An RNA of 177 nucleotides, treated with 2A3 and read out base by base.
RNA sequence: GGGAACGACUCGAGUAGAGUCGAAAAGAAGAGAAUAAAUAGAGGAGUCAGGGUUCGCACACGCUCCGCGAACCUACGGUAACACUGACUGUGGAGCGGAAAAGGCAGAUACGAUACUGCCAAAGAAACCACCAGGUGCAUUCGUGCACCUGGUGGUAAAAGAAACAACAACAACAAC
Reactivity to 2A3 in 0.01 (KOAc 150mM, MgCl2 10mM, bicine 150mM(pH8.5), 24C), signal-to-noise 1, nucleotides 027 to 126: g010a000a000g130a000g030a000a000u180a130a080a000u300a150g240a130g090g050a030g050u150c000a000g010g000g010u000u020c000g000c000a000c000a000c180g010c010u040c010c010g020c000g000a000a000c010c000u000a010c000g000g000u050a060a000c080a000c030u020g050a000c000u050g100u110g110g000a000g000c000g000g000a000a160a000a000g000g020c010a000g000a000u070a240c000g000a020u030a100c020u000g040c000c000a000a000a000g000a000a000